[RMDB]
RNA sequence: GGGAACGACUCGAGUAGAGUCGAAAAGAUAUGGAUCCUUCAGCUAGCUCUGUGGUCGGAAACGACCACCGAGCUUGGACCUGAAUGGGAUCCUAAGUCAAAAGCUUAUGUGUUCGCACAUAAGCAAGAUCCGUAGAUAGUUCGCUAUCUACGGAUCAAAAGAAACAACAACAACAAC
Reactivity to DMS in 0.01 (KOAc 150mM, MgCl2 10mM, bicine 150mM(pH8.5), 24C), signal-to-noise 4, nucleotides 027 to 126: g000a010u000a080u010g000g000a010u000c000c010u000u000c000a000g000c000u000a010g020c000u000c000u000g010u000g000g000u010c000g030g000a030a010a050c010g010a010c000c000a000c000c060g000a010g030c000u000u010g000g010a030c300c010u000g000a010a110u020g000g020g030a010u000c010c000u000a010a070g000u000c000a120a130a150a130g000c000u000u000a010u000g030u000g000u010u010c300g030c000a010c000a010u010a010a010g000c000a060a040
Reactivity to 2A3 in 0.01 (KOAc 150mM, MgCl2 10mM, bicine 150mM(pH8.5), 24C), signal-to-noise 2, nucleotides 027 to 126: g010a000u050a020u080g000g010a010u000c000c000u010u010c000a010g000c020u070a010g010c010u010c000u000g000u000g000g010u030c000g000g020a040a010a010c010g000a000c000c000a000c010c010g010a000g000c000u010u040g000g000a010c020c000u010g000a080a060u170g100g020g000a010u050c000c000u000a030a010g000u000c020a000a000a150a130g010c010u020u000a010u010g080u010g050u080u190c300g040c150a000c000a010u000a000a000g000c010a000a000